Description
An RNA of 207 nucleotides, treated with 2A3 and read out base by base. Reactivities are given for positions 27 through 156. The reactions ran in a buffer of 150 mM KOAc, 10 mM MgCl2 and 150 mM bicine (pH 8.5), at 24 C. 2A3 adducts were read by reverse transcription with SuperScript II with manganese.
RNA sequence: GGGAACGACUCGAGUAGAGUCGAAAAUCACCACCUACUACGAGGCAGGAACCUACCAUCAGGCCGGACAGGUCGAAGGCACCGAGGGCCAGCACGCCUCCCUUCUUGCGCCAGAUGUCGCUAUCUUGCCAGCCAUUCCGGCGGAGGUGGAGCACACGCUAGAAGCUGGAUUCGUCCAGCUUCUAGCAAAAGAAACAACAACAACAAC
Reactivity to 2A3 in 0.01 (KOAc 150mM, MgCl2 10mM, bicine 150mM(pH8.5), 24C), signal-to-noise 2, nucleotides 027 to 156: u130c040a010c040c000a000c010c000u140a210c010u040a030c190g040a130g000g000c000a000g010g000a010a040c000c050u060a040c030c000a070u040c070a030g020g000c030c010g060g030a060c070a050g000g010u080c020g060a070a020g010g000c030a020c130c180g060a160g000g100g000c040c020a080g070c110a020c120g030c000c020u000c010c020c000u020u070c010u110u290g050c100g020c040c010a000g000a000u010g050u150c040g000c060u010a090u100c000u030u020g000c000c000a060g020c020c000a080u190u180c050c060g030g000c000g000g020a020g030g000u010g000g000a000g020c070a070c000a000c180